[RMDB]
RNA sequence: GGGAACGACUCGAGUAGAGUCGAAAAUCAUUGGCUUCGCUGCGCGCUGCGUUGCCUAGGCUUCAGAUGCUUCGUACUGUUGCCAACGUUGCAAUUUCCAAACGCUUAUGCGAAAGUGUGCAAACAAGAGUAACAAAUUAUUCGUAAUUUGUUACUCAAAAGAAACAACAACAACAAC
Reactivity to 2A3 in 0.01 (KOAc 150mM, MgCl2 10mM, bicine 150mM(pH8.5), 24C), signal-to-noise 9, nucleotides 027 to 126: u110c030a030u020u120g020g000c010u010u010c010g020c060u110g010c020g000c010g000c020u010g000c000g030u010u020g000c000c000u010a070g020g000c000u020u010c010a030g030a230u100g070c050u100u140c080g070u080a080c020u040g020u030u010g000c010c010a040a030c080g040u050u070g030c040a070a100u020u050u000c010c000a060a060a040c020g010c030u200u210a060u300g020c010g020a020a000a010g030u030g000u020g020c000a030a060a040c050a090a070
Reactivity to DMS in 0.01 (KOAc 150mM, MgCl2 10mM, bicine 150mM(pH8.5), 24C), signal-to-noise 9, nucleotides 027 to 126: u000c080a100u010u000g000g010c020u000u000c020g010c030u000g010c100g010c100g000c030u000g020c060g020u000u000g010c020c020u000a110g010g000c020u000u000c040a040g000a170u000g010c090u000u010c100g020u000a110c070u000g000u000u000g010c010c010a080a120c160g010u000u000g010c050a060a110u000u000u000c020c020a080a110a160c050g010c020u000u000a100u000g010c030g010a060a070a040g010u000g010u000g010c050a120a080a100c250a070a100